An RNA of 177 nucleotides, treated with DMS and 2A3 and read out base by base. It was measured as part of the RMDB library OK1LIB. The DMS profile rests on 3,457 reads. Reactivities are given for positions 27 through 126. The RNA was probed in 150 mM KOAc, 10 mM MgCl2 and 150 mM bicine (pH 8.5) at 24 C.
[RMDB]
RNA sequence: GGGAACGACUCGAGUAGAGUCGAAAAGAAAGAAAAGAAACUUCCGAUGAAGACCAGUAUUCUACGCCUGUACCACGGGUCGGUUUUCCUACAGGCGAUUUCUUCGAGCGAAAAUAUAAGAAAGAAACAUUUUACCAGGAUUCGUCCUGGUAAAAUGAAAAGAAACAACAACAACAAC
Reactivity to DMS in 0.01 (KOAc 150mM, MgCl2 10mM, bicine 150mM(pH8.5), 24C), signal-to-noise 3, nucleotides 027 to 126: g010a070a060a060g000a070a070a150a070g030a100a090a090c070u010u010c000c130g000a090u030g030a090a030g000a070c140c060a110g000u020a060u030u010c010u000a190c060g010c050c020u010g000u000a050c180c140a070c030g020g000g030u000c030g010g000u000u030u010u020c010c040u000a050c120a030g000g020c010g040a020u000u020u000c000u000u000c010g000a050g050c070g030a080a050a070a100u030a100u010a080a080g000a040a060a040g000a130a060a160
Reactivity to 2A3 in 0.01 (KOAc 150mM, MgCl2 10mM, bicine 150mM(pH8.5), 24C), signal-to-noise 3, nucleotides 027 to 126: g040a010a090a010g060a010a080a030a020g120a040a160a050c030u040u000c030c010g090a100u160g050a040a000g040a040c060c020a030g090u070a090u080u050c030u060a040c010g000c020c000u050g040u070a040c000c050a050c080g000g020g000u020c030g040g000u030u010u110u060c000c000u010a040c030a030g040g010c030g020a000u070u070u020c020u040u000c030g020a050g040c040g130a080a010a190a000u270a030u110a070a020g100a070a040a020g040a010a050a020